[RMDB]
RNA sequence: GGGAACGACUCGAGUAGAGUCGAAAAAAGUGUCAAUGGACUCUUGCUAUGGAUGCUAUGGUGUUUAUAAGAGGGCUGGUGACUACUAUGAAAUAAAUAACCCUUUAUACGCUUGUUCAUCGUGACCGACUUUCUCCAGAUUCGUCUGGAGAAAGUCAAAAGAAACAACAACAACAAC
Reactivity to DMS in 0.01 (KOAc 150mM, MgCl2 10mM, bicine 150mM(pH8.5), 24C), signal-to-noise 1, nucleotides 027 to 126: a030a070g010u020g000u010c050a070a030u010g000g000a100c000u000c020u000u000g010c130u010a110u000g020g010a030u000g000c070u010a110u000g050g010u000g000u010u000u000a020u000a050a120g020a100g000g010g060c040u010g020g000u000g010a120c140u000a050c040u000a080u010g000a100a040a110u050a060a090a120u010a060a130c020c000c020u000u000u000a060u010a090c130g020c030u000u000g010u000u000c040a130u010c020g000u000g000a130c130c060